[RMDB]
RNA sequence: GGGAACGACUCGAGUAGAGUCGAAAAGUGUUUGGCGACAACCAGUUUCGCUACGCGCUGCUGAGCCUGGCCGCCUGCGAGGCCCCCCUGCAGCUCAACAUCGGCGGCUUCAGGUCUGGGUCGCCGCCCUCGUAGCCAAUUUCGAUUGGCUACGAGGAAAAGAAACAACAACAACAAC
Reactivity to DMS in 0.01 (KOAc 150mM, MgCl2 10mM, bicine 150mM(pH8.5), 24C), signal-to-noise 1, nucleotides 027 to 126: g030u020g040u010u020u010g020g000c000g000a020c040a080a190c150c070a080g010u000u000u000c000g020c010u010a070c160g020c060g010c080u000g010c020u010g010a240g000c010c000u000g010g020c000c020g000c010c000u000g000c110g000a080g000g000c020c010c040c040c050c000u000g020c110a120g010c030u010c070a010a130c150a140u020c130g010g000c040g000g020c010u010u020c050a030g050g010u000c130u010g020g010g010u000c000g040c020c000g020c090

An RNA of 177 nucleotides, treated with DMS and read out base by base.
The RNA was probed in 150 mM KOAc, 10 mM MgCl2 and 150 mM bicine (pH 8.5) at 24 C.